[RMDB]
RNA sequence: GGGAACGACUCGAGUAGAGUCGAAAAGAUAUGGAUGUAUCCGAAUGCUUUCCCAUGGGAGAAUAUCAGCUCGGAAACGAGCUGUAAGUUCGAAGAACAUGGGAAAGAGGUAGAUACAUCCUAAGUCGUUAAACAUAGACUUCGGUCUAUGUUUAACAAAAGAAACAACAACAACAAC
Reactivity to DMS in 0.01 (KOAc 150mM, MgCl2 10mM, bicine 150mM(pH8.5), 24C), signal-to-noise 4, nucleotides 027 to 126: g010a090u010a290u010g010g020a020u000g010u000a010u000c020c020g010a150a140u030g010c000u000u000u000c000c000c010a020u000g030g020g000a140g000a010a020u000a300u000c000a010g010c000u000c000g010g010a080a090a240c000g010a020g010c000u010g000u000a030a300g000u000u000c010g000a120a180g010a190a240c000a000u000g000g000g000a000a000a010g000a040g010g000u010a070g000a020u000a010c000a010u010c000c000u000a030a070g000u000c100
Reactivity to 2A3 in 0.01 (KOAc 150mM, MgCl2 10mM, bicine 150mM(pH8.5), 24C), signal-to-noise 3, nucleotides 027 to 126: g040a030u100a030u150g000g010a000u010g020u010a010u020c060c030g100a280a180u300g140c030u000u000u020c000c000c000a020u010g030g020g000a090g000a020a000u090a050u210c010a000g030c010u010c000g000g000a040a080a060c010g000a000g040c010u000g010u000a020a040g030u000u010c020g020a110a020g050a030a000c000a000u010g020g000g000a000a000a000g040a020g030g010u080a030g010a010u000a010c000a000u000c000c000u000a030a020g060u030c040

Annotation: An RNA of 177 nucleotides, treated with DMS and 2A3 and read out base by base. The 2A3 profile rests on 9,317 reads. It was measured as part of the RMDB library TTRINS. DMS adducts were read by reverse transcription with MarathonRT.